[RMDB]
RNA sequence: GGGAACGACUCGAGUAGAGUCGAAAAGACUCAUGGGAAGUCGGCGUGACUCUCGACUAAUGUGGAUGUCCGCUUUCUGGCUCCAGGUAAACACUGUUGGUGCGGAGGUUGGUUAGUGGCGCGCCAACAUAGUCGGGAUAUUCGUAUCCCGACUAUGAAAAGAAACAACAACAACAAC
Reactivity to DMS in 0.01 (KOAc 150mM, MgCl2 10mM, bicine 150mM(pH8.5), 24C), signal-to-noise 9, nucleotides 027 to 126: g000a080c020u000c040a130u030g010g000g010a120a050g000u000c030g010g020c030g010u030g000a050c030u000c050u000c030g010a110c140u030a090a080u030g020u020g000g000a060u020g000u010c010c010g010c070u000u020u010c070u010g000g010c030u010c020c020a050g000g010u010a080a090a130c150a050c000u000g000u000u000g000g010u000g000c010g000g000a070g000g010u010u000g000g000u010u010a060g010u010g010g000c020g010c020g000c010c010a020a060
Reactivity to 2A3 in 0.01 (KOAc 150mM, MgCl2 10mM, bicine 150mM(pH8.5), 24C), signal-to-noise 8, nucleotides 027 to 126: g020a000c010u020c030a080u110g080g000g050a080a050g020u030c020g000g000c020g060u130g020a060c010u010c020u030c050g080a050c080u220a140a130u270g050u180g080g040a060u130g070u030c000c000g000c000u040u090u050c050u050g050g010c020u010c000c020a020g050g040u090a030a070a030c060a010c000u020g010u020u020g020g010u020g000c010g000g030a030g020g020u060u030g020g010u030u050a040g010u010g030g010c000g000c010g000c010c000a010a010